[RMDB]
RNA sequence: GGGAACGACUCGAGUAGAGUCGAAAAGAUAUGGAUUGUAGGUAGCCUAGUAUCGGAAACGAUACGAAAGGCUAUAAUCUAUGUCCUAAGUCAAACCACGCAGUGCACUUCGGUGCACUGCGUGGAACUAAACGAUGGUGUUCGCACCAUCGUUUAGAAAAGAAACAACAACAACAAC
Reactivity to 2A3 in 0.01 (KOAc 150mM, MgCl2 10mM, bicine 150mM(pH8.5), 24C), signal-to-noise 1, nucleotides 027 to 126: g000a010u070a010u150g000g000a050u140u190g060u130a080g120g040u040a000g020c000c000u070a060g000u000a000u000c020g000g000a150a070a010c010g000a000u050a040c000g050a080a040a000g010g000c030u000a000u010a010a000u030c010u020a010u040g010u000c000c000u050a070a010g030u050c060a130a080a120c000c000a000c000g160c010a010g020u040g030c010a020c020u120u290c300g140g000u000g000c030a000c050u030g000c000g040u010g000g000a000a000
Reactivity to DMS in 0.01 (KOAc 150mM, MgCl2 10mM, bicine 150mM(pH8.5), 24C), signal-to-noise 1, nucleotides 027 to 126: g000a020u000a100u000g000g020a000u000u000g030u000a060g030g040u000a000g010c000c000u000a270g010u000a000u000c000g000g010a160a090a210c010g010a000u000a000c000g020a080a090a090g000g000c000u000a010u000a070a020u000c010u000a000u000g000u000c000c050u010a060a110g010u000c100a080a120a140c010c000a000c000g020c020a040g020u000g010c000a010c000u000u000c150g040g030u000g010c010a010c000u000g030c020g030u000g010g000a000a050